[RMDB]
RNA sequence: GGGAACGACUCGAGUAGAGUCGAAAAGAUAUGGAGAGAACUACCUCGAUUCCGAAGAACUAGCUCGGAAACGAGCUAGGGAGGGGAGGCUCUCCUAAGUCAAAAGACCACGGUUCGCCGUGGUCAACUCAAUAGAUGGCUUCGGCCAUCUAUUGAGAAAAGAAACAACAACAACAAC
Reactivity to DMS in 0.01 (KOAc 150mM, MgCl2 10mM, bicine 150mM(pH8.5), 24C), signal-to-noise 2, nucleotides 027 to 126: g000a020u000a030u000g000g000a040g010a020g000a120a120c270u010a190c000c000u000c000g000a260u020u030c010c020g000a130a140g020a100a250c010u000a000g000c000u010c000g000g010a000a000a020c000g010a000g010c000u010a000g000g000g000a010g030g040g020g000a010g000g000c000u000c000u000c000c000u000a000a030g010u000c040a100a100a080a140g000a030c000c000a010c000g010g000u010u020c250g020c010c000g030u000g000g010u000c000a020a050
Reactivity to 2A3 in 0.01 (KOAc 150mM, MgCl2 10mM, bicine 150mM(pH8.5), 24C), signal-to-noise 2, nucleotides 027 to 126: g010a000u000a000u020g010g000a020g020a000g000a150a210c220u110a080c210c010u030c020g090a140u300u270c050c000g150a300a030g000a000a000c020u000a000g000c000u000c010g000g000a000a000a020c000g010a010g000c000u000a000g000g000g000a010g000g020g060g010a010g000g020c000u000c000u000c010c000u000a010a000g010u000c000a000a000a060a160g000a010c000c010a000c000g030g050u050u080c300g010c120c010g040u030g020g010u020c000a010a000
Chemical mapping of a 177-nucleotide RNA with DMS and 2A3. The DMS profile rests on 1,693 reads. Reactivities are given for positions 27 through 126. DMS adducts were read by reverse transcription with MarathonRT. The reactions ran in a buffer of 150 mM KOAc, 10 mM MgCl2 and 150 mM bicine (pH 8.5), at 24 C. DMS (dimethyl sulfate) methylates the pairing face of unpaired adenines and cytosines.